RNA sequence: GGGAACGACUCGAGUAGAGUCGAAAACAGUGAUGGAAACAUCACUGAAAAACCGGAAACGGACAUGACGACCGCGCGCAUGUCGGGAAACCGUAAACGCGAAAAGAGCUAGCGAAAGCUAGCUCAAAUAUCAUGCUCCGUUCGCGGAGCAUGAUAUAAAAGAAACAACAACAACAAC
Reactivity to 2A3 in 0.01 (KOAc 150mM, MgCl2 10mM, bicine 150mM(pH8.5), 24C), signal-to-noise 3, nucleotides 027 to 126: c010a010g000u010g010a030u000g000g030a030a000a000c010a000u000c000a000c000u000g020a040a000a000a000a000c030c000g100g050a180a170a000c070g070g000a010c000a010u020g080a130c000g030a080c010c010g000c010g000c000g000c000a000u040g020u020c010g020g040g000a150a050a000c020c000g020u110a090a150a000c000g020c010g020a100a030a010a030g010a010g000c000u010a000g000c000g030a120a030a000g000c000u000a010g000c000u000c000a000a000
Reactivity to DMS in 0.01 (KOAc 150mM, MgCl2 10mM, bicine 150mM(pH8.5), 24C), signal-to-noise 2, nucleotides 027 to 126: c000a030g040u000g000a010u000g020g000a280a120a300c000a000u000c010a020c010u000g000a030a040a010a060a130c000c000g010g000a060a080a100c000g000g040a060c040a040u000g000a170c040g010a110c130c070g090c050g000c050g000c060a150u000g000u000c040g000g000g010a040a060a160c300c010g000u020a040a190a130c000g020c040g000a030a030a090a040g000a000g000c000u000a000g000c010g000a150a100a110g000c000u000a000g000c000u000c000a020a030